[RMDB]
RNA sequence: GGGAACGACUCGAGUAGAGUCGAAAAAAGCAUUGUCGGGCUCAUCGCCACCAAUGACGAUUUCAUUAGUGCUGGGUUGAAAAUACCCCUUAGCCCCAUUUAGCGUCGCUAAAGGCACUUCACUGACAAAAGAGGUGGGAUUCGUCCCACCUCUUUUAAAAGAAACAACAACAACAAC
Reactivity to DMS in 0.01 (KOAc 150mM, MgCl2 10mM, bicine 150mM(pH8.5), 24C), signal-to-noise 1, nucleotides 027 to 126: a010a070g000c020a000u000u000g030u010c300g040g010g040c000u000c200a110u010c300g010c010c000a030c070c040a040a030u010g000a110c070g000a160u010u000u000c040a090u010u000a010g010u000g020c010u000g010g010g000u000u010g000a100a050a130a170u000a010c000c010c020c300u000u000a080g000c040c010c000c090a180u010u000u010a090g000c070g010u030c110g010c010u000a010a000a070g010g000c000a010c010u000u000c220a110c110u000g010a220c170